[RMDB]
Chemical mapping of a 177-nucleotide RNA with DMS and 2A3. 2A3 adducts were read by reverse transcription with SuperScript II with manganese.
RNA sequence: GGGAACGACUCGAGUAGAGUCGAAAAGAAACGAAGGUUGGCUAAUACUGGUCGGACAUCAGGAGGUUAGUGCAAUCACAUAAACCAGCUUGACAACAAAAAGGAAAAAGAAAGAAGAAAAAGAAAAAUCGUAAAUACGCUUCGGCGUAUUUACGAUAAAAGAAACAACAACAACAAC
Reactivity to DMS in 0.01 (KOAc 150mM, MgCl2 10mM, bicine 150mM(pH8.5), 24C), signal-to-noise 1, nucleotides 027 to 126: g000a040a010a170c020g040a130a080g000g050u000u000g020g000c000u000a020a140u000a010c100u030g000g000u000c080g000g000a280c110a030u000c000a080g030g000a140g000g000u000u000a000g000u000g000c040a010a020u060c000a090c100a100u160a000a070a160c000c050a120g040c000u000u010g000a020c050a040a010c200a000a040a050a010a020g000g020a040a080a000a130a150g000a070a000a060g100a080a180g000a000a070a010a120a000g030a000a000a180a180
Reactivity to 2A3 in 0.01 (KOAc 150mM, MgCl2 10mM, bicine 150mM(pH8.5), 24C), signal-to-noise 1, nucleotides 027 to 126: g150a000a100a000c140g000a130a040g000g030u030u020g000g000c010u010a020a020u040a130c000u030g050g040u000c190g010g020a000c000a000u000c000a100g000g060a110g040g040u000u000a000g000u040g090c060a040a040u190c020a000c000a010u300a030a100a010c020c020a030g050c000u100u090g250a080c000a000a000c030a010a240a000a000a000g150g000a100a100a100a000a050g170a130a040a070g070a070a000g000a000a030a020a030a000g180a000a000a010a010
The RNA was probed in 150 mM KOAc, 10 mM MgCl2 and 150 mM bicine (pH 8.5) at 24 C.